[RMDB]
This 177-nucleotide RNA was probed chemically with 2A3 and DMS. Conditions: 150 mM KOAc, 10 mM MgCl2 and 150 mM bicine (pH 8.5), 24 C. In probing experiments dimethyl sulfate is read out at A N1 and C N3, which are open when not base-paired. 2A3 adducts were read by reverse transcription with SuperScript II with manganese.

RNA sequence: GGGAACGACUCGAGUAGAGUCGAAAAGAUAUGGACUCCACGUGCCGGGUCAACAGCUCGGAAACGAGACAUGACCGCAUGGAGUCCUAAGUCAAAACUGUCCAUGUCCUUCGGGACAUGGACAGAACAAUUAUUUCUGGUUCGCCAGAAAUAAUUGAAAAGAAACAACAACAACAAC
Reactivity to 2A3 in 0.01 (KOAc 150mM, MgCl2 10mM, bicine 150mM(pH8.5), 24C), signal-to-noise 5, nucleotides 027 to 126: g030a010u060a060u140g010g000a000c010u020c010c020a050c200g060u060g080c110c180g300g020g040u020c010a040a060c060a160g060c000u000c000g010g000a060a060a030c010g010a000g020a020c060a090u120g000a010c010c010g000c010a010u030g000g010a000g000u000c000c000u000a010a000g020u020c020a000a010a150a210c010u010g000u030c010c000a000u000g000u000c010c020u040u140c300g110g000g000a010c000a000u000g000g000a000c000a000g000a000a000
Reactivity to DMS in 0.01 (KOAc 150mM, MgCl2 10mM, bicine 150mM(pH8.5), 24C), signal-to-noise 6, nucleotides 027 to 126: g010a040u010a300u000g000g010a010c000u000c000c010a070c160g010u000g020c090c160g050g030g000u000c010a020a090c300a170g000c000u000c000g000g000a100a100a170c010g010a010g000a040c070a180u000g000a030c000c000g010c010a060u000g000g000a020g010u000c000c000u000a010a060g000u000c030a060a080a100a140c000u000g000u000c000c000a010u000g010u000c000c000u000u010c200g020g020g010a000c000a000u000g000g000a000c000a000g010a040a140
It was measured as part of the RMDB library TTRDEL. For DMS, 9,524 sequencing reads were counted.